[RMDB]
RNA sequence: GGGAACGACUCGAGUAGAGUCGAAAAGGCCGCCGCGGAGCUCCGAGCAGCGGUAGCGCCCCCCUGUAAAGCGGUUCGCUAUGCCGGGGCCACUGUGAACCCUGCCGCCUGCCGGAACACUCUUCGCUGAACCGUGUGAUUUCGAUCACACGGUUCAAAAAGAAACAACAACAACAAC
Reactivity to 2A3 in 0.01 (KOAc 150mM, MgCl2 10mM, bicine 150mM(pH8.5), 24C), signal-to-noise 1, nucleotides 027 to 126: g020g020c000c000g040c030c000g000c030g020g020a040g010c010u000c000c030g040a110g020c050a000g000c000g010g020u010a000g000c020g050c020c010c000c000c000c000u010g050u120a100a060a000g010c030g040g220u210u260c070g010c000u050a060u170g000c000c020g000g000g000g000c000c030a130c070u130g060u080g090a040a080c020c000c000u010g000c000c000g060c030c040u020g000c010c000g000g010a000a000c040a030c030u010c020u050u000c010g000c010
Reactivity to DMS in 0.01 (KOAc 150mM, MgCl2 10mM, bicine 150mM(pH8.5), 24C), signal-to-noise 1, nucleotides 027 to 126: g000g000c100c040g030c000c080g020c010g000g000a040g000c290u000c010c010g000a210g010c000a130g000c000g040g040u000a030g000c070g000c050c130c090c100c090c030u000g000u000a080a010a050g010c030g030g000u040u060c000g020c000u000a030u040g000c060c120g000g000g090g000c160c020a150c040u090g000u030g000a040a100c080c040c000u000g000c000c060g000c260c040u010g000c000c000g000g000a070a040c050a200c080u030c020u000u000c040g070c000
This 177-nucleotide RNA was probed chemically with 2A3 and DMS. For DMS the reverse transcriptase was MarathonRT. 2A3 is a SHAPE reagent: it acylates the 2'-hydroxyl of flexible nucleotides of all four kinds. Reactivities are given for positions 27 through 126.